[RMDB]
RNA sequence: GGGAACGACUCGAGUAGAGUCGAAAAGUAAUAGAUAGUUGGAUGACGAGAAAGGGUGCGCUGAUAUCCGGUACGAAUGCUAGCAGUAAAUAGAAUAGCGCUCCUAAUACAACUAGCAACAAAAGGAUAAGGUAUCGUGAUGUCAAUCACAUUGCGAGAUACUAUGGCUGUUCGCAGCCAUAGUAUCAAAAGAAACAACAACAACAAC
Reactivity to DMS in 0.01 (KOAc 150mM, MgCl2 10mM, bicine 150mM(pH8.5), 24C), signal-to-noise 1, nucleotides 027 to 156: g050u000a000a100u010a030g000a060u010a050g000u010u000g040g040a120u000g000a150c120g010a180g050a080a100a090g000g030g040u000g080c000g020c120u010g020a120u000a050u010c040c010g080g050u010a070c050g000a160a170u000g000c020u000a000g020c020a160g040u020a010a050a190u000a090g010a080a160u000a090g030c070g000c040u000c010c000u000a080a230u000a100c020a120a060c040u000a020g000c020a060a260c080a040a110a060a050g030g020a120u010a070a200g050g020u000a050u000c030g000u010g000a010u000g020u010c000a050a160u000c060a060c040a000u020u000g020c000g010a160
Reactivity to 2A3 in 0.01 (KOAc 150mM, MgCl2 10mM, bicine 150mM(pH8.5), 24C), signal-to-noise 3, nucleotides 027 to 156: g020u020a020a100u030a130g050a020u050a050g010u050u040g010g060a070u050g030a060c100g020a020g080a050a070a120g030g020g000u020g010c050g000c030u050g000a010u000a030u050c010c000g010g000u040a020c010g050a110a050u070g000c010u010a020g010c040a020g040u150a030a080a110u130a020g080a030a030u050a060g030c040g000c020u040c000c000u010a000a000u050a010c010a020a000c020u050a000g000c020a010a080c040a030a140a020a010g090g050a040u090a040a100g060g040u110a010u050c030g050u120g040a010u020g020u040c040a050a080u110c000a010c000a020u040u080g000c040g010a050